[RMDB]
RNA sequence: GGGAACGACUCGAGUAGAGUCGAAAAAGCAGGAGUACGCUCCUGCAUGGGUAGACGAAUUGACCCCAACUGAAGUUCAAUUCUAAAGUUAAAAGGAGUUUUAUAUGACUGGACGUACGCGUCCAGAUGACGAUUUCAUUCUUCGGAAUGAAAUCAAGUGAUUACGUAUGUUCGCAUACGUAAUCACAAAAGAAACAACAACAACAAC
Reactivity to DMS in 0.01 (KOAc 150mM, MgCl2 10mM, bicine 150mM(pH8.5), 24C), signal-to-noise 1, nucleotides 027 to 156: a100g030c020a000g000g000a050g050u000a100c300g020c010u000c000c000u000g060c000a020u000g000g000g000u030a100g050a140c130g010a040a050u000u010g000a050c000c010c000c020a070a210c220u000g000a070a050g010u010u010c040a060a060u000u000c040u000a090a060a120g010u000u000a140a060a120a110g020g020a290g000u000u000u000u040a100u000a060u080g020a090c020u000g000g020a010c020g000u000a050c240g030c000g050u000c000c010a000g060a020u000g020a130c130g010a010u000u000u000c000a000u000u000c020u010u020c300g070g000a020a020u010g000a070a030a000u000c000a030a020
Reactivity to 2A3 in 0.01 (KOAc 150mM, MgCl2 10mM, bicine 150mM(pH8.5), 24C), signal-to-noise 3, nucleotides 027 to 156: a000g010c010a010g010g000a010g000u040a020c140g030c060u000c000c000u000g000c000a000u010g000g000g020u130a120g020a200c130g000a020a010u000u010g010a010c000c000c010c020a080a040c200u260g050a020a000g020u070u010c010a000a000u000u000c020u090a090a100a080g070u090u190a080a070a040a030g160g000a070g030u070u050u070u100a170u060a070u170g120a050c010u000g000g000a000c000g020u060a030c180g020c010g140u000c010c000a000g000a000u010g030a020c110g000a000u000u000u000c000a000u000u010c000u020u020c090g080g000a000a000u000g000a010a000a000u000c000a000a010